[RMDB]
Structure probing data (DMS and 2A3) for a 207-nucleotide construct. Reactivities are rounded to 0.1 and cut off at 0 and 3. The data come from the RNA Mapping Database (RMDB), library OK3TST. 2A3 adducts were read by reverse transcription with SuperScript II with manganese. Conditions: 150 mM KOAc, 10 mM MgCl2 and 150 mM bicine (pH 8.5), 24 C. For 2A3, 1,109 sequencing reads were counted.
RNA sequence: GGGAACGACUCGAGUAGAGUCGAAAAUAAAGUAGUUGCAACAAACACAGUUCCAGAUACUGAUGCUGAAACGGCAGAAGCUACUACAACUAUCACAGUUCAAAAUAAGACACAGACAACUACCUUGGCAGUAACUCCUGAUAGUCCUGCUGCUGGACAUAUCAGACAGCUUCGGCUGUCUGAUAUGAAAAGAAACAACAACAACAAC
Reactivity to DMS in 0.01 (KOAc 150mM, MgCl2 10mM, bicine 150mM(pH8.5), 24C), signal-to-noise 1, nucleotides 027 to 156: u000a040a070a130g030u000a080g000u000u010g030c000a130a170c070a140a130a060c130a040c000a190g030u000u080c030c130a090g000a010u000a300c110u000g000a060u030g040c040u000g000a010a080a000c020g070g080c080a100g010a160a000g040c030u000a030c030u000a060c060a030a000c060u000a130u000c070a080c110a100g000u000u000c040a020a050a050a050u000a040a090g030a030c060a250c000a170g000a060c080a040a060c040u030a070c000c060u010u030g000g000c070a140g000u040a060a030c070u000c030c010u000g000a030u000a040g080u010c000c030u000g100c060u010g030c030u010g000g030a300
Reactivity to 2A3 in 0.01 (KOAc 150mM, MgCl2 10mM, bicine 150mM(pH8.5), 24C), signal-to-noise 2, nucleotides 027 to 156: u110a010a060a020g010u010a010g000u020u030g040c030a060a020c010a040a220a040c050a030c020a070g000u080u040c000c050a020g030a050u130a090c040u070g020a100u060g030c020u050g060a220a100a120c070g040g000c020a020g030a140a030g000c020u020a010c010u000a010c010a080a020c020u040a050u150c030a050c030a090g030u080u080c070a100a070a050a090u150a170a020g110a020c050a020c050a120g160a080c040a050a050c070u050a030c010c000u040u050g080g010c000a010g040u100a030a040c020u000c050c030u030g020a080u040a040g060u060c040c000u050g010c020u040g000c030u010g010g010a010